The record gives the reactivity of an RNA of 177 nucleotides to 2A3 and DMS. As a SHAPE reagent, 2A3 marks flexible, mostly unpaired nucleotides at the ribose 2'-OH.
RNA sequence: GGGAACGACUCGAGUAGAGUCGAAAAUGCACUAUAAUGCUGAGAGAAGUAGCAGUUACUUUAUUCUAUAAGUAACUGCAACAGCUCUCAGUAUUGUAAGGCUCAAAGGCAACCGUUCGCGGUUGCCCAUGGUAUCCCUCUUCGGAGGGAUACCAUGAAAAGAAACAACAACAACAAC
Reactivity to 2A3 in 0.01 (KOAc 150mM, MgCl2 10mM, bicine 150mM(pH8.5), 24C), signal-to-noise 2, nucleotides 027 to 126: u070g020c010a010c080u030a000u020a030a010u010g000c000u000g000a000g000a000g000a040a020g010u030a020g020c000a010g000u010u000a000c000u100u050u110a180u300u170c120u140a170u000a280a010g010u000a000a010c010u000g000c000a000a000c000a000g000c010u000c000u000c000a010g000u010a010u020u000g000u010a010a050g000g000c020u000c100a120a130a020g010g000c010a010a000c030c020g030u070u080c260g000c020g080g000u000u000g000c000c000
Reactivity to DMS in 0.01 (KOAc 150mM, MgCl2 10mM, bicine 150mM(pH8.5), 24C), signal-to-noise 1, nucleotides 027 to 126: u030g010c000a010c020u000a000u000a010a000u000g000c000u010g010a010g000a010g000a030a030g020u000a170g020c000a010g000u000u000a000c010u000u000u000a140u050u000c290u020a130u000a010a000g010u010a020a020c000u000g000c010a020a020c160a040g010c000u000c000u000c000a000g010u000a000u000u000g030u000a010a090g000g000c010u000c210a100a140a130g000g000c000a010a000c000c000g030u010u010c150g040c030g030g010u000u000g020c000c000
The 2A3 profile rests on 1,899 reads.